[RMDB]
RNA sequence: GGGAACGACUCGAGUAGAGUCGAAAAUGCCGACACUUGACGACUACCAUGUUAAUGACGGUGCGGUUUCUUAUGGAGGGCUGAACAAGUCCGCCAUGACUUGCUGGUUUGGACUGUGAGAGUGGUGGAGGAAGAAUGCGUUCGCGCAUUCUUCCUCAAAAGAAACAACAACAACAAC
Reactivity to DMS in 0.01 (KOAc 150mM, MgCl2 10mM, bicine 150mM(pH8.5), 24C), signal-to-noise 1, nucleotides 027 to 126: u000g000c000c000g020a290c000a000c130u000u000g000a000c170g000a160c160u060a280c060c120a270u000g000u000u040a070a000u000g000a090c000g000g040u000g030c030g000g000u000u000u030c000u000u000a050u120g020g000a040g030g000g020c050u000g000a050a050c240a080a000g000u000c000c020g020c000c000a010u000g000a030c110u030u000g030c120u000g000g020u030u020u030g000g000a140c030u010g010u000g000a060g000a300g080u000g030g000u150g000
Reactivity to 2A3 in 0.01 (KOAc 150mM, MgCl2 10mM, bicine 150mM(pH8.5), 24C), signal-to-noise 2, nucleotides 027 to 126: u090g050c050c000g020a040c000a000c000u090u110g020a080c060g000a030c010u070a070c020c060a080u110g050u080u130a100a120u220g010a020c000g000g030u090g010c010g010g000u000u040u060c040u140u090a080u010g070g000a050g040g040g000c000u000g020a070a000c080a200a040g030u000c000c000g000c000c000a020u000g070a080c000u010u040g000c030u050g030g020u060u090u060g000g040a010c000u020g000u010g070a030g000a000g050u010g000g050u070g020